[RMDB]
RNA sequence: GGGAACGACUCGAGUAGAGUCGAAAACAACAAAGAAACUAGCGACGUCGAAGGCGAAGACGGUGCACGAAGAACAACUCGACGUCGAGGAAAGUGCACGAAAAAGCCGAGCUAGGAAACAAACAAAGGGAUGUACUAACUUCGGUUAGUACAUCCCAAAAGAAACAACAACAACAAC
Reactivity to 2A3 in 0.01 (KOAc 150mM, MgCl2 10mM, bicine 150mM(pH8.5), 24C), signal-to-noise 1, nucleotides 027 to 126: c120a000a020c090a080a050a020g000a000a090a000c000u000a000g000c000g260a080c100g170u190c210g130a190a000g000g000c000g020a000a000g140a000c000g010g010u000g000c000a000c000g010a010a010g000a110a080c070a040a000c000u000c000g300a300c050g150u160c060g050a000g040g120a030a000a000g000u000g000c000a000c000g110a280a000a000a000a000g000c040c100g010a000g000c000u000a000g010g000a000a000a000c000a050a050a050c030a090a000a000
Reactivity to DMS in 0.01 (KOAc 150mM, MgCl2 10mM, bicine 150mM(pH8.5), 24C), signal-to-noise 1, nucleotides 027 to 126: c040a100a040c300a150a100a110g000a110a150a000c000u000a000g000c000g000a290c140g010u040c190g000a070a070g040g010c000g070a130a030g000a110c210g030g060u000g030c000a000c090g000a040a150g010a080a060c010a100a150c000u000c070g000a300c180g090u110c000g000a100g000g020a060a120a100g000u000g000c000a040c000g030a000a020a060a050a300g000c000c030g000a030g000c070u000a000g040g020a250a000a110c180a060a030a140c300a040a020a090